[RMDB]
Structure probing data (2A3 and DMS) for a 207-nucleotide construct. For 2A3 the reverse transcriptase was SuperScript II with manganese. The 2A3 profile rests on 2,229 reads. Reactivities are given for positions 27 through 156. The RNA was probed in 150 mM KOAc, 10 mM MgCl2 and 150 mM bicine (pH 8.5) at 24 C. It was measured as part of the RMDB library OK3TST. The DMS profile rests on 4,870 reads.

RNA sequence: GGGAACGACUCGAGUAGAGUCGAAAACAUGGUGGCAAGUACGUCGCGAUAUUGCACCACCUGCAAUAGAAGCGUAGACAUCAACUGUAGCGAGAGCUACUCAACUUAUGGACCUUAGAGCAUGCGAAGACGACCGGUCCUGUCGGAAUUCGCUAGAAUUAUGCAUGGACUUCGGUCCAUGCAUAAUAAAAGAAACAACAACAACAAC
Reactivity to 2A3 in 0.01 (KOAc 150mM, MgCl2 10mM, bicine 150mM(pH8.5), 24C), signal-to-noise 4, nucleotides 027 to 156: c070a070u100g010g020u000g040g030c080a040a050g050u090a070c070g020u010c000g000c010g040a030u000a010u040u030g000c020a030c080c010a030c030c090u020g000c000a000a000u030a050g120a150a000g000c010g030u060a050g010a040c000a060u080c050a060a130c090u060g030u020a000g000c010g030a030g000a000g050c010u010a000c030u020c060a010a060c020u120u110a050u120g020g030a040c000c010u040u150a070g010a020g080c080a090u140g000c000g020a020a010g040a040c010g010a000c000c020g050g060u020c000c020u000g010u000c020g000g030a120a050u020u030c010g010c010u020a010g050a080
Reactivity to DMS in 0.01 (KOAc 150mM, MgCl2 10mM, bicine 150mM(pH8.5), 24C), signal-to-noise 3, nucleotides 027 to 156: c070a150u020g030g030u000g020g010c070a050a110g020u000a080c070g020u000c030g020c060g020a220u000a060u000u000g000c020a080c040c100a110c080c120u000g020c020a040a080u000a050g020a110a120g020c060g030u010a100g010a060c060a080u010c040a070a080c030u000g030u000a020g000c000g020a210g000a300g020c000u000a030c040u010c070a060a050c110u010u000a080u010g010g000a090c020c020u010u000a080g030a150g000c070a130u000g020c000g010a090a100g010a160c050g010a040c020c030g010g000u000c030c020u000g040u000c000g010g000a120a190u000u000c020g020c040u000a110g010a180